[RMDB]
RNA sequence: GGGAACGACUCGAGUAGAGUCGAAAACGAAGCCAGUACCGCCUGGCGAUGAAAUGGCGGACGAAUUAGCAACAAAGGGUAAGGUUUAAUCGCCGAAGUUAGAUUUCGGAUAGCUGCGGAAGUGGCGUUACCAUGCAUUAUUCGUAAUGCAUGGUAAAAAAGAAACAACAACAACAAC
Reactivity to DMS in 0.01 (KOAc 150mM, MgCl2 10mM, bicine 150mM(pH8.5), 24C), signal-to-noise 9, nucleotides 027 to 126: c080g020a150a160g010c000c010a050g010u020a120c030c030g010c100c020u010g000g010c030g000a070u020g010a060a050a060u020g010g010c010g010g010a130c110g000a070a070u010u010a080g010c080a070a060c090a070a090a100g010g000g010u020a060a100g000g010u000u000u020a070a080u010c080g000c000c010g010a050a060g000u020u020a080g010a170u010u000u000c020g000g000a110u010a100g010c010u010g010c020g000g050a100a120g020u000g010g010c030g020
Reactivity to 2A3 in 0.01 (KOAc 150mM, MgCl2 10mM, bicine 150mM(pH8.5), 24C), signal-to-noise 8, nucleotides 027 to 126: c040g030a050a010g020c020c010a030g030u100a090c010c020g030c010c020u020g030g000c010g010a020u060g060a030a100a050u110g040g020c010g000g020a010c000g000a020a110u140u080a080g050c030a010a070c020a080a120a030g040g010g030u080a060a040g070g010u030u030u090a050a070u060c040g000c030c010g010a030a000g030u080u140a070g020a230u050u030u030c010g010g000a040u070a050g010c010u030g010c030g040g100a140a080g020u010g030g000c000g000
This 177-nucleotide RNA was probed chemically with DMS and 2A3.